This 207-nucleotide RNA was probed chemically with DMS and 2A3.
RNA sequence: GGGAACGACUCGAGUAGAGUCGAAAAUGUCGGCAAGCUCUAUGUAUGGACACUUACGAAGGGUUUUGGUUGUUUUGUAUCUCAAGCCGACUUUGAGUAUUUGAGGAAAAUACGACAGAAAAAACAAAUAGACCGGUAUCCUUCGGGAUACCGGUAAGAUCUUAUUUUGAUUCGUCAAAAUAAGAUCAAAAGAAACAACAACAACAAC
Reactivity to DMS in 0.01 (KOAc 150mM, MgCl2 10mM, bicine 150mM(pH8.5), 24C), signal-to-noise 1, nucleotides 027 to 156: u000g050u010c000g020g000c020a070a160g020c060u010c010u000a090u010g010u010a080u000g010g000a110c110a070c050u010u020a080c030g010a110a100g020g040g030u000u000u000u000g040g020u000u000g010u010u000u010u000g030u000a070u000c050u000c010a000a180g010c020c010g000a070c020u000u000u010g010a300g010u000a040u000u000u000g020a170g030g000a170a010a020a030u000a060c000g010a200c060a150g040a010a030a060a070a050a140c060a080a040a070u000a160g000a110c020c020g010g010u000a010u000c020c000u020u000c240g070g000g060a040u000a000c010c000g010g000u000a000a030
Reactivity to 2A3 in 0.01 (KOAc 150mM, MgCl2 10mM, bicine 150mM(pH8.5), 24C), signal-to-noise 1, nucleotides 027 to 156: u070g000u000c000g010g000c040a060a050g010c010u030c010u080a110u130g050u040a040u090g060g080a090c060a020c200u040u090a030c070g100a160a080g000g000g030u050u040u110u120g010g010u000u030g010u040u030u000u040g040u040a180u020c020u020c090a000a040g000c010c000g000a000c000u010u000u040g040a020g010u000a020u000u000u010g070a150g000g260a010a050a000a000u040a010c010g020a040c090a060g170a020a100a030a050a000a020c050a010a140a020u140a020g140a040c010c000g000g000u000a000u000c000c000u000u050c090g040g000g000a000u000a000c010c000g000g010u000a000a000
DMS adducts were read by reverse transcription with MarathonRT. Conditions: 150 mM KOAc, 10 mM MgCl2 and 150 mM bicine (pH 8.5), 24 C. 2A3 adducts were read by reverse transcription with SuperScript II with manganese.